[RMDB]
Background:
The record gives the reactivity of an RNA of 177 nucleotides to 2A3 and DMS.
RNA sequence: GGGAACGACUCGAGUAGAGUCGAAAAGAUAUGGACCUGGCUAGCCGAAGAACUAUGCUGACUCGGAAACGAGCAAUGGCAUAGGGAGGCUAGCAGGUCCUAAGUCAAAGCGUACUUCGGUACGCAAGAUAUUCCUCAUCUUCGGAUGAGGAAUAUCAAAAGAAACAACAACAACAAC
Reactivity to 2A3 in 0.01 (KOAc 150mM, MgCl2 10mM, bicine 150mM(pH8.5), 24C), signal-to-noise 6, nucleotides 027 to 126: g010a010u040a020u110g010g010a000c000c000u050g300g210c000u010a000g000c000c020g280a300a050g010a040a030c010u000a000u010g000c020u100g130a300c020u000c010g010g020a060a040a030c010g010a000g020c070a100a190u250g020g000c000a010u000a000g010g000g000a010g000g000c000u000a000g010c000a010g000g000u000c000c000u000a010a000g000u010c030a050a050a030g000c000g010u000a000c000u030u080c280g090g000u010a000c000g000c000a000a000
Reactivity to DMS in 0.01 (KOAc 150mM, MgCl2 10mM, bicine 150mM(pH8.5), 24C), signal-to-noise 5, nucleotides 027 to 126: g000a060u000a290u010g010g000a010c000c010u010g010g020c000u000a000g030c000c000g010a090a130g010a120a180c000u000a000u000g000c000u010g000a180c000u000c000g000g010a050a070a130c000g010a020g010c130a120a100u000g000g000c000a010u000a000g000g000g010a040g030g020c000u000a000g000c000a010g000g000u000c000c000u000a010a070g000u000c030a110a100a140g000c000g010u000a000c010u000u010c150g020g000u000a000c000g010c000a010a010